[RMDB]
RNA sequence: GGGAACGACUCGAGUAGAGUCGAAAAGGAAUCGGGUGAGUGUGACGGGAGCAGGCACUCGAAGGCUUGGGAAUUCCAAAGCAGCUGAUCCAUGUCAUCCCAGCACACGUUAGGGAGGAAGUGAAACCUUCCCCUUUCUGUUCGCAGAAAGGGGAAGAAAAGAAACAACAACAACAAC
Reactivity to 2A3 in 0.01 (KOAc 150mM, MgCl2 10mM, bicine 150mM(pH8.5), 24C), signal-to-noise 2, nucleotides 027 to 126: g070g010a080a060u110c040g030g020g030u110g050a120g000u040g000u020g020a040c030g050g010g010a000g000c000a030g000g000c020a010c000u000c000g030a070a040g080g000c030u060u050g020g050g130a300a300u270u200c040c000a100a040a010g010c020a000g030c020u030g010a030u110c010c010a100u050g020u040c030a060u000c010c010c020a010g000c010a000c000a000c030g070u090u090a030g020g030g020a090g040g060a110a050g040u080g130a090a010a010c010
Reactivity to DMS in 0.01 (KOAc 150mM, MgCl2 10mM, bicine 150mM(pH8.5), 24C), signal-to-noise 3, nucleotides 027 to 126: g010g010a110a120u000c060g010g010g000u000g000a160g020u000g010u000g000a070c080g020g010g000a020g030c050a060g000g000c100a030c140u000c040g000a130a110g010g010c010u000u000g000g010g030a260a200u010u010c020c000a000a020a080g030c010a070g030c100u000g010a050u010c020c040a040u000g000u010c080a140u010c010c000c000a120g020c030a030c020a020c040g000u020u010a120g000g000g000a100g000g020a080a090g000u000g000a090a080a090c200